[RMDB]
Chemical mapping of a 177-nucleotide RNA with 2A3 and DMS. For DMS the reverse transcriptase was MarathonRT. The RNA was probed in 150 mM KOAc, 10 mM MgCl2 and 150 mM bicine (pH 8.5) at 24 C. It was measured as part of the RMDB library TTRDES. For DMS, 664 sequencing reads were counted.
RNA sequence: GGGAACGACUCGAGUAGAGUCGAAAAGAUAUGGAGCGUGUGGAUGAACUACGACAAUGGUCGGAAACGACCAGAACGUCGCAUCGUAACAUCACGCUCCUAAGUCAAACCAUGCUUCGGCAUGGAAGUGUCGUAGCAUCUUCGGAUGCUACGACACAAAAGAAACAACAACAACAAC
Reactivity to 2A3 in 0.01 (KOAc 150mM, MgCl2 10mM, bicine 150mM(pH8.5), 24C), signal-to-noise 1, nucleotides 027 to 126: g000a010u060a050u120g000g000a000g050c000g000u000g000u070g080g050a090u090g000a230a280c130u170a030c300g020a000c010a050a100u020g020g030u010c000g000g000a030a100a060c000g020a000c000c000a000g000a130a060c060g010u000c010g010c040a130u190c040g140u090a130a050c060a070u140c020a020c010g000c000u000c000c000u020a040a020g010u000c000a000a000a110c000c000a000u000g000c000u040u120c270g220g000c030a000u000g000g010a160a140
Reactivity to DMS in 0.01 (KOAc 150mM, MgCl2 10mM, bicine 150mM(pH8.5), 24C), signal-to-noise 1, nucleotides 027 to 126: g040a040u000a300u000g000g000a000g030c020g040u000g000u000g000g030a120u060g000a160a190c160u020a060c000g010a000c010a100a240u020g000g010u000c000g030g000a070a110a120c010g080a080c010c000a000g000a180a130c170g000u000c040g000c030a070u000c100g000u070a030a180c050a050u000c000a080c000g020c030u020c000c000u000a000a060g000u000c070a110a050a300c000c000a040u000g030c000u000u000c240g000g000c020a000u000g000g000a000a040